[RMDB]
RNA sequence: GGGAACGACUCGAGUAGAGUCGAAAACAUGAACCACCGUGCCUGGCCUCUAGCAUCUAUUUCUUGAACAAAAGUUGGGGCUAUGUAAUUUGCUUUAAAAGUGUCAUUUCACCUGCUUAACUUUUGGCUGCCUGAUGCUCUUCGGAGCAUCAGGCAGAAAAGAAACAACAACAACAAC
Reactivity to 2A3 in 0.01 (KOAc 150mM, MgCl2 10mM, bicine 150mM(pH8.5), 24C), signal-to-noise 1, nucleotides 027 to 126: c030a000u110g020a000a010c030c050a000c050c000g040u000g030c020c010u000g110g020c010c010u000c010u010a000g100c000a080u000c080u170a080u060u250u020c000u080u180g100a100a050c070a190a210a030a050g040u080u060g020g000g120g000c040u000a000u000g060u000a070a210u000u040u090g000c050u000u000u290a200a130a060a000g010u080g050u110c030a120u000u090u060c030a030c060c000u040g060c010u140u040a080a060c010u010u130u000u000g050g000

Annotation:
Chemical mapping of a 177-nucleotide RNA with 2A3. The data come from the RNA Mapping Database (RMDB), library OK1LIB. The 2A3 profile rests on 392 reads. Reactivities are given for positions 27 through 126. 2A3 adducts were read by reverse transcription with SuperScript II with manganese.